[RMDB]
RNA sequence: GGGAACGACUCGAGUAGAGUCGAAAAUGUGUAUGUAGUAAUAAAGUGCAAGGAGGGGUCGCGUGUGGUGAGGUAGAAAAAACAAUGGCGGCGCGUCGGGAUCGGGAGGACGUCGACGAGGACGGCUUCCUCGAUCCCAACGACGACUUCGAGGUCACUUAAAUUCCGGAUUCGUCCGGAAUUUAAGAAAAGAAACAACAACAACAAC
Reactivity to DMS in 0.01 (KOAc 150mM, MgCl2 10mM, bicine 150mM(pH8.5), 24C), signal-to-noise 1, nucleotides 027 to 156: u000g030u000g030u000a070u010g010u000a150g010u010a100a090u000a010a060a120g040u000g060c060a100a060g050g040a080g030g040g040g030u020c060g000c080g020u010g040u010g000g040u000g040a050g020g030u000a130g010a010a030a060a110a070a050c050a070a080u000g020g040c020g020g050c030g020c050g010u000c060g030g020g010a020u000c040g000g040g010a050g000g020a030c020g000u020c010g070a160c300g000a200g000g000a040c000g000g010c010u000u000c010c000u010c030g010a000u000c020c000c020a010a010c000g010a020c000g040a010c040u000u000c080g000a110g010g000u010c030a230
Reactivity to 2A3 in 0.01 (KOAc 150mM, MgCl2 10mM, bicine 150mM(pH8.5), 24C), signal-to-noise 2, nucleotides 027 to 156: u100g020u010g010u050a050u110g050u030a070g030u010a060a120u050a160a270a030g070u060g040c040a050a040g030g000a040g000g020g000g020u000c030g000c050g050u070g030u030g030g030u040g010a010g000g030u060a020g060a070a090a010a000a010a000c080a060a050u060g030g030c050g010g000c010g000c000g040u010c040g000g010g000a000u010c000g000g000g000a000g010g000a010c000g000u000c020g070a200c090g050a060g080g050a000c000g010g000c010u000u000c000c010u040c020g000a000u000c000c000c000a000a000c000g020a000c000g020a040c020u070u070c040g050a010g030g010u040c000a010